The record gives the reactivity of an RNA of 177 nucleotides to 2A3 and DMS. The reactions ran in a buffer of 150 mM KOAc, 10 mM MgCl2 and 150 mM bicine (pH 8.5), at 24 C. The data come from the RNA Mapping Database (RMDB), library M2PK50. DMS adducts were read by reverse transcription with MarathonRT. Reactivities are given for positions 27 through 126. For 2A3, 1,246 sequencing reads were counted.
RNA sequence: GGGAACGACUCGAGUAGAGUCGAAAAACAUUGGCCUUCGGGCCAAUGUACUGGAAAUAAAGCCGAAAGGCUACGGAUUCCUUAUUUGGCGAAAGCCUGCGAGAUUAUGUAAGUUCGCUUACAUAAACACACUUAUGGCUUUCGAGCCAUAAGUGUGAAAAGAAACAACAACAACAAC
Reactivity to 2A3 in 0.01 (KOAc 150mM, MgCl2 10mM, bicine 150mM(pH8.5), 24C), signal-to-noise 2, nucleotides 027 to 126: a000c010a030u000u000g000g000c010c010u020u040c270g050g000g030c000c010a010a000u000g000u000a000c030u020g030g170a030a090a100u240a130a250a000g020c020c010g050a070a020a020g010g000c000u030a010c050g040g060a100u040u070c010c000u030u090a180u180u150u100g000g050c010g020a060a010a000g000c000c000u010g000c070g110a140g020a110u060u090a020u030g020u000a010a040g000u000u110c250g000c070u010u020a010c000a000u040a000a040a010
Reactivity to DMS in 0.01 (KOAc 150mM, MgCl2 10mM, bicine 150mM(pH8.5), 24C), signal-to-noise 2, nucleotides 027 to 126: a060c000a000u000u010g000g010c000c000u000u000c200g040g020g000c010c000a000a020u000g010u000a060c090u010g000g010a030a100a080u000a050a130a040g000c000c000g030a100a090a140g020g020c000u000a050c180g000g000a230u010u000c000c000u000u000a120u010u000u000g020g010c000g000a130a030a130g020c010c000u000g000c210g000a070g010a160u010u000a000u000g000u000a000a010g020u020u020c250g020c000u000u000a020c000a000u000a020a030a150